[RMDB]
This 207-nucleotide RNA was probed chemically with 2A3.
Source: RMDB library M2RFPK, as collected in RNAgym.
For 2A3 the reverse transcriptase was SuperScript II with manganese.
Conditions: 150 mM KOAc, 10 mM MgCl2 and 150 mM bicine (pH 8.5), 24 C.
RNA sequence: GGGAACGACUCGAGUAGAGUCGAAAAGACCAAUAACAGAAUGCACCACCGCGUAAAAUCAUCUGAUUGGGUGAGUUGGUCGCACCGCCAUUUGACGAACGAACGCCAAGCCUAAGCCGUCUUUGUGAACACGAGCUAGUCUUCGGACUAGCUCGAAGUAAGUAACUGGCUUCGGCCAGUUACUUACAAAAGAAACAACAACAACAAC
Reactivity to 2A3 in 0.01 (KOAc 150mM, MgCl2 10mM, bicine 150mM(pH8.5), 24C), signal-to-noise 1, nucleotides 027 to 156: g050a000c000c000a040a080u110a020a010c020a020g080a060a190u180g040c020a000c020c060a020c020c040g020c040g100u080a040a100a050a020u060c130a020u060c030u170g080a260u020u180g070g000g020u020g020a040g010u050u130g000g080u010c030g060c000a000c000c070g000c000c010a080u020u000u190g060a050c020g030a120a000c070g000a030a030c010g060c020c050a010a000g010c010c000u040a060a000g030c070c000g100u110c030u030u070u070g050u010g050a070a080c010a050c110g000a000g000c000u000a000g020u030c000u030u000c220g030g000a000c000u000a010g050c010u000c000g000a020a000